[RMDB]
The record gives the reactivity of an RNA of 177 nucleotides to DMS. It was measured as part of the RMDB library OK2TST. For DMS the reverse transcriptase was MarathonRT.
RNA sequence: GGGAACGACUCGAGUAGAGUCGAAAACUGUAGGAAAUAACCUGAUCCCAGGAGAUCUGCCUAGGGGCUGACAGGCAAUGAUGCUCUAGUCCUUCCAGGACUUCCCAGGAAGUACUUGCAGACUCUAAACCAAAGCUGAGUUCGCUCAGCUUUGGUUAAAAGAAACAACAACAACAAC
Reactivity to DMS in 0.01 (KOAc 150mM, MgCl2 10mM, bicine 150mM(pH8.5), 24C), signal-to-noise 1, nucleotides 027 to 126: c090u020g020u010a060g010g010a120a150a130u020a120a160c050c000u000g000a180u010c030c050c030a300g110g020a050g000a090u000c000u010g010c010c210u010a110g000g010g000g000c120u000g010a100c270a010g000g010c180a090a040u000g020a180u000g010c030u010c020u000a020g010u020c020c000u000u010c040c060a080g010g000a190c140u000u000c040c040c130a040g000g020a020a090g010u000a040c020u000u030g000c060a000g020a080c040u000c020u000a020
Description: Conditions: 150 mM KOAc, 10 mM MgCl2 and 150 mM bicine (pH 8.5), 24 C.